[RMDB]
RNA sequence: GGGAACGACUCGAGUAGAGUCGAAAAUUUAGGGUUUGUCAUCAAAUCUAGUUAUGACCAAAAGUACAUAAAAGUAAAUAGUGAAAUUAUGUUCUUCGCUUAGAAUGAGGUACAUGAAUAUCAUAUGGAAGUACAUGAACUUCGGUUCAUGUACUUCAAAAGAAACAACAACAACAAC
Reactivity to DMS in 0.01 (KOAc 150mM, MgCl2 10mM, bicine 150mM(pH8.5), 24C), signal-to-noise 2, nucleotides 027 to 126: u030u000u010a120g010g050g010u000u000u000g000u000c210a130u020c040a010a020a010u010c030u000a090g000u000u020a070u010g000a260c040c020a050a050a070a120g010u000a050c020a020u010a020a010a090a060g010u000a020a050a270u000a060g000u000g010a030a070a120u000u010a010u010g000u000u000c020u000u000c060g020c120u010u020a060g050a060a080u010g020a040g010g030u010a040c060a000u000g010a020a020u000a130u000c010a020u000a050u010g000
Reactivity to 2A3 in 0.01 (KOAc 150mM, MgCl2 10mM, bicine 150mM(pH8.5), 24C), signal-to-noise 1, nucleotides 027 to 126: u050u040u100a090g010g040g020u000u060u020g070u100c060a200u010c010a150a010a010u000c010u010a050g100u110u090a060u090g070a010c000c000a000a210a000a000g060u120a060c010a020u130a060a110a010a000g040u040a030a210a100u260a120g180u020g000a010a010a010u000u010a010u030g000u000u020c060u010u030c020g030c060u100u050a070g110a200a070u120g020a040g000g020u020a040c000a040u000g000a020a010u130a000u120c070a080u060a040u130g190